[RMDB]
RNA sequence: GGGAACGACUCGAGUAGAGUCGAAAACAAAGGGGGGCCGAAGAAGCAAACCGGAAAAGUGGCAGUUUUUCCGUGGAAACUGACAGGCAAAAAGGAAGGUCAUCGGACGAUACUUUGGAGAGACCACGAUAUAGAAUUGUUUCGACAAUUCUAUAUCAAAAGAAACAACAACAACAAC
Reactivity to 2A3 in 0.01 (KOAc 150mM, MgCl2 10mM, bicine 150mM(pH8.5), 24C), signal-to-noise 9, nucleotides 027 to 126: c030a000a050a030g020g000g000g000g040g000c010c000g040a110a040g010a020a000g040c050a070a030a050c020c000g020g040a020a030a010a010g070u080g100g040c060a050g020u010u000u000u040u020c030c010g030u110g020g050a060a070a020c010u020g040a040c020a030g000g050c010a040a070a020a020a010g110g020a060a020g050g020u020c020a060u050c060g030g020a020c030g020a040u070a140c030u050u040u090g030g010a070g000a000g010a030c010c010a020c090
Reactivity to DMS in 0.01 (KOAc 150mM, MgCl2 10mM, bicine 150mM(pH8.5), 24C), signal-to-noise 9, nucleotides 027 to 126: c050a040a080a110g010g000g000g000g020g030c020c010g000a050a080g010a110a070g000c070a050a130a180c140c030g000g010a030a020a040a050g010u010g000g010c100a060g000u010u000u000u010u010c020c030g010u020g000g000a040a060a060c040u010g010a080c110a070g000g010c090a040a050a050a100a060g010g010a080a090g000g010u000c030a060u000c050g000g010a050c050g010a100u020a040c050u000u010u000g000g010a120g000a080g000a140c040c030a080c180